[RMDB]
RNA sequence: GGGAACGACUCGAGUAGAGUCGAAAAUGAAGCGGAUUUGACUGAGGAUAUCGACGGGAAUGAGUACGCACGAUCAGGUCGCCUGGCGUUCAUAUCCGGUGAAACAGGAAAGGCGGUUGACGGCAACAACAAAGGUUCGGUAAUUUUCAUUAUGCGAGGGUCUAAGAAUAUUCGUAUUCUUAGACCCAAAAGAAACAACAACAACAAC
Reactivity to DMS in 0.01 (KOAc 150mM, MgCl2 10mM, bicine 150mM(pH8.5), 24C), signal-to-noise 2, nucleotides 027 to 156: u000g040a120a130g040c030g030g010a120u000u000u030g020a090c030u050g010a080g030g000a100u000a080u010c030g040a090c010g000g010g020a080a100u000g010a130g010u010a030c050g060c110a120c030g020a090u010c090a070g040g030u000c020g000c020c020u020g020g000c070g000u000u010c050a070u000a090u010c030c040g000g030u000g010a090a100a080c090a130g000g020a040a070a080g020g030c030g020g000u000u000g020a110c040g020g000c050a060a100c040a060a090c050a040a070a160g010g030u000u000c000g010g020u030a040a080u000u000u020u000c050a100u000u000a090u010g020c060g060a300
Reactivity to 2A3 in 0.01 (KOAc 150mM, MgCl2 10mM, bicine 150mM(pH8.5), 24C), signal-to-noise 2, nucleotides 027 to 156: u100g030a000a000g050c040g010g050a030u020u040u160g070a130c050u000g010a010g000g020a020u020a030u100c080g050a040c010g000g010g070a040a050u080g000a000g110u110a050c050g000c060a070c040g040a100u050c060a050g070g060u040c000g020c050c010u030g020g000c060g050u050u050c050a050u070a140u080c020c000g000g040u030g030a040a030a000c030a020g060g000a080a030a020g020g000c020g040g000u010u020g000a020c020g010g010c000a020a020c000a010a000c000a010a160a010g040g000u070u030c010g000g010u030a030a110u030u020u030u080c030a040u000u080a030u090g090c050g000a090
Chemical mapping of a 207-nucleotide RNA with DMS and 2A3.
Values cover nucleotides 27 to 156.
It was measured as part of the RMDB library OK3TST.
For DMS, 3,932 sequencing reads were counted.